Description: The record gives the reactivity of an RNA of 177 nucleotides to DMS and 2A3. Values are in units of 0.01, from 0 to 300, in steps of 10. 2A3 adducts were read by reverse transcription with SuperScript II with manganese.

[RMDB]
RNA sequence: GGGAACGACUCGAGUAGAGUCGAAAAUGCGUGACUUUACGUUAAAGGGUUAUGUUCUUGCUACCAUUAUUGUGUUUCUGUGUGCUGUACUGAUGUAUUUGUGUUUACCUACAUUUUCUAUGGCACCGUACUACUUUAUCUUCGGAUAAAGUAGUACAAAAGAAACAACAACAACAAC
Reactivity to DMS in 0.01 (KOAc 150mM, MgCl2 10mM, bicine 150mM(pH8.5), 24C), signal-to-noise 5, nucleotides 027 to 126: u010g010c180g030u000g000a020c020u000u000u000a010c020g010u000u010a090a080a210g000g000g010u000u000a070u020g020u000u000c010u000u000g010c100u000a100c120c100a110u000u000a070u000u000g010u000g000u010u000u000c010u000g000u010g010u000g010c010u000g020u000a020c110u000g000a010u010g010u000a030u010u010u010g030u010g010u010u010u010a060c120c190u000a020c020a000u000u000u010u010c140u000a010u000g010g010c010a020c020c200
Reactivity to 2A3 in 0.01 (KOAc 150mM, MgCl2 10mM, bicine 150mM(pH8.5), 24C), signal-to-noise 9, nucleotides 027 to 126: u230g010c080g070u120g010a010c000u010u010u030a010c010g090u080u170a080a050a040g070g000g000u050u050a170u230g010u020u050c020u020u030g050c030u100a110c030c060a140u120u110a110u170u240g050u010g010u020u020u010c020u030g080u010g000u000g090c000u020g000u010a010c010u020g020a010u010g020u030a060u040u130u100g120u010g100u080u160u140a050c000c010u010a000c000a010u040u030u030u000c020u010a010u010g000g000c010a000c000c010
The 2A3 profile rests on 13,288 reads.